[RMDB]
RNA sequence: GGGAACGACUCGAGUAGAGUCGAAAACGAACCGGGAAUAGCCCAGCUUGAAAAUCGGGCAACCUCGUUGUCCGAAUUGUAGUCUGGAGAAGCGUCCUCAGCGGCGGACCGGGCCCAAGUCCCCUGGCAUUAUCAGUAUCUUCGGAUACUGAUAAUGAAAAGAAACAACAACAACAAC
Reactivity to 2A3 in 0.01 (KOAc 150mM, MgCl2 10mM, bicine 150mM(pH8.5), 24C), signal-to-noise 9, nucleotides 027 to 126: c060g050a060a030c010c010g010g000g030a070a120u100a110g030c000c000c000a010g010c020u050u060g110a070a060a080a110u020c000g000g000g000c010a000a000c030c180u260c210g020u000u000g000u000c000c000g030a060a060u020u060g080u060a020g040u060c010u020g020g010a120g030a140a010g080c000g020u020c010c000u150c090a080g010c090g040g000c010g000g020a010c000c000g000g030g000c010c010c000a010a010g050u030c010c010c000c010u020g050g010
Reactivity to DMS in 0.01 (KOAc 150mM, MgCl2 10mM, bicine 150mM(pH8.5), 24C), signal-to-noise 9, nucleotides 027 to 126: c170g010a100a090c020c010g000g000g000a120a080u020a150g000c060c000c000a020g010c020u010u010g010a070a040a060a070u000c000g000g000g000c000a000a010c010c180u030c300g010u000u000g000u000c000c000g010a010a030u010u010g000u010a040g010u050c010u000g000g000a120g000a070a080g010c010g020u000c010c010u030c160a110g010c100g010g000c020g000g000a060c010c010g000g000g010c030c020c030a090a110g010u010c010c000c000c060u010g000g000

The record gives the reactivity of an RNA of 177 nucleotides to 2A3 and DMS. For 2A3 the reverse transcriptase was SuperScript II with manganese. The data come from the RNA Mapping Database (RMDB), library OK1LIB.